Notes
Chemical mapping of a 177-nucleotide RNA with DMS. The RNA was probed in 150 mM KOAc, 10 mM MgCl2 and 150 mM bicine (pH 8.5) at 24 C. It was measured as part of the RMDB library TTRDEL.
[RMDB]
RNA sequence: GGGAACGACUCGAGUAGAGUCGAAAAGAUAUGGAGAAUCGAUAAGAGGAACUCGGAAACGAGUUUCCUCUUUUGACGAUUACUCCUAAGUCAAAGGCUAAGCCAUGGUUCGCCAUGGCUUAGCCAACUGAUAAUCGUACUUCGGUACGAUUAUCAGAAAAGAAACAACAACAACAAC
Reactivity to DMS in 0.01 (KOAc 150mM, MgCl2 10mM, bicine 150mM(pH8.5), 24C), signal-to-noise 2, nucleotides 027 to 126: g000a070u010a300u030g000g000a020g010a080a000u000c000g020a140u000a020a020g000a020g030g000a030a030c000u010c010g010g010a080a050a120c010g020a030g010u000u000u000c000c000u000c000u000u000u000u000g030a230c140g000a010u000u010a110c010u010c010c000u010a020a080g030u000c000a100a080a090g020g000c010u000a010a020g000c030c000a000u000g000g000u000u010c220g000c000c000a000u000g000g000c000u000u000a000g010c000c000a010a000